[RMDB]
RNA sequence: GGGAACGACUCGAGUAGAGUCGAAAAAGGUUGGGAGAAGAUCCCCAGCAUACUCCGUGAGUAUGCAACAGUGCGCACCAACCCGUUCCAGUAUGGAAUCGCAAGCACUUAUCUGUCCAAGACCACAUACUAUGGACGCUUUCGAGCGUCCAUAGUAAAAAGAAACAACAACAACAAC
Reactivity to DMS in 0.01 (KOAc 150mM, MgCl2 10mM, bicine 150mM(pH8.5), 24C), signal-to-noise 2, nucleotides 027 to 126: a100g020g020u000u010g000g000g000a110g020a140a100g000a110u000c040c000c010c230a090g000c000a000u000a010c000u000c020c300g000u000g010a000g010u000a000u000g030c000a110a100c120a070g030u000g010c040g060c150a230c070c010a010a070c000c000c040g000u000u000c000c000a200g000u010a100u010g000g010a020a010u030c030g030c130a070a170g000c040a020c070u010u000a040u000c080u000g000u010c070c060a100a090g010a130c060c070a010c210a230
Overview: Chemical mapping of a 177-nucleotide RNA with DMS. The reactions ran in a buffer of 150 mM KOAc, 10 mM MgCl2 and 150 mM bicine (pH 8.5), at 24 C. The DMS profile rests on 897 reads.